[RMDB]
RNA sequence: GGGAACGACUCGAGUAGAGUCGAAAACAGGAAACUGGUUAAUCGUUUUCCUUGGUAGUAUAGCGGAAACCAUAAAUAAGAAGAACUCUAAGUGCUUGAGUAGAGUUAAAAUAAUUAGUCAGGCAAUUAAGGUACUCCACGUUCGCGUGGAGUACAACCAUAGAUCUUAGUUCGCUAAGAUCUAUGGAAAAGAAACAACAACAACAAC
Reactivity to DMS in 0.01 (KOAc 150mM, MgCl2 10mM, bicine 150mM(pH8.5), 24C), signal-to-noise 2, nucleotides 027 to 156: c050a060g020g010a050a040a050c090u010g040g010u010u000a100a110u010c070g000u000u000u010u000c020c040u010u000g030g050u010a030g030u000a070u000a050g000c030g030g010a160a050a090c040c010a100u000a060a040a110u000a120a130g020a130a130g010a110a060c010u000c030u000a070a090g000u000g020c040u010u000g020a100g010u000a030g010a100g020u010u000a040a070a070a120u000a050a080u010u000a060g010u000c040a020g000g020c030a030a120u010u000a110a120g010g000u000a010c010u010c000c000a000c000g030u000u020c270g010c020g070u000g000g010a010g040u000a010c000a030a100
Reactivity to 2A3 in 0.01 (KOAc 150mM, MgCl2 10mM, bicine 150mM(pH8.5), 24C), signal-to-noise 9, nucleotides 027 to 156: c040a010g050g050a060a030a040c050u120g050g060u150u160a100a070u180c040g010u010u020u060u080c020c000u030u040g080g000u040a070g010u030a050u070a100g040c050g010g030a050a040a020c030c010a030u100a140a090a020u140a100a050g080a050a010g030a040a010c000u000c000u010a030a030g040u030g160c000u020u010g020a030g030u010a000g000a000g020u120u160a010a010a000a000u110a020a010u190u030a020g040u010c000a000g020g000c000a010a020u160u160a150a030g070g000u000a000c000u000c000c000a000c010g020u030u060c200g020c010g070u000g000g000a000g000u000a000c000a000a000